[RMDB]
RNA sequence: GGGAACGACUCGAGUAGAGUCGAAAAGUACAACUCUGGCAGAUUUGGGGAGAACAAAUACAUCAAAAGAUGAGAUCAGGAACAAGAUGGUGUCAACCACUCCAGAGAGAAAUGAUAAGACUAGUGCUAAAAGGGAAAGGAAUACCAACGCACCCAGCGAAUUGAAAUGGUUCGCCAUUUCAAUUCGAAAAGAAACAACAACAACAAC
Reactivity to 2A3 in 0.01 (KOAc 150mM, MgCl2 10mM, bicine 150mM(pH8.5), 24C), signal-to-noise 4, nucleotides 027 to 156: g040u030a020c010a090a010c050u000c010u050g030g010c120a050g030a200u110u110u140g020g000g000g010a070g040a090a010c050a030a070a040u190a040c010a020u070c050a050a090a050a050g070a030u120g040a040g010a060u080c040a060g060g070a060a030c040a080a030g040a060u030g000g030u040g030u060c050a060a050c040c020a020c010u010c010c010a000g010a000g010a000g040a050a070a060u160g020a060u040a100a000g030a030c040u050a020g050u010g020c010u050a040a050a050a020g040g020g010a080a070a030g010g050a010a040u070a110c030c020a030a030c020g010c020a020c000c010c010a020g060
Reactivity to DMS in 0.01 (KOAc 150mM, MgCl2 10mM, bicine 150mM(pH8.5), 24C), signal-to-noise 2, nucleotides 027 to 156: g040u000a070c000a070a210c060u010c020u000g010g040c050a040g010a130u000u000u000g000g010g010g020a190g010a090a110c030a000a010a100u000a130c050a070u000c020a100a130a080a140g020a150u000g010a070g000a110u000c040a090g010g010a040a070c030a070a110g000a090u000g020g030u010g000u000c100a120a080c030c020a050c030u000c010c000a040g000a060g000a170g010a040a100a090u010g020a080u000a020a090g030a120c070u010a070g040u020g000c070u000a030a110a040a090g000g000g000a070a080a110g000g000a100a080u000a060c000c000a040a110c060g000c070a240c010c010c010a080g000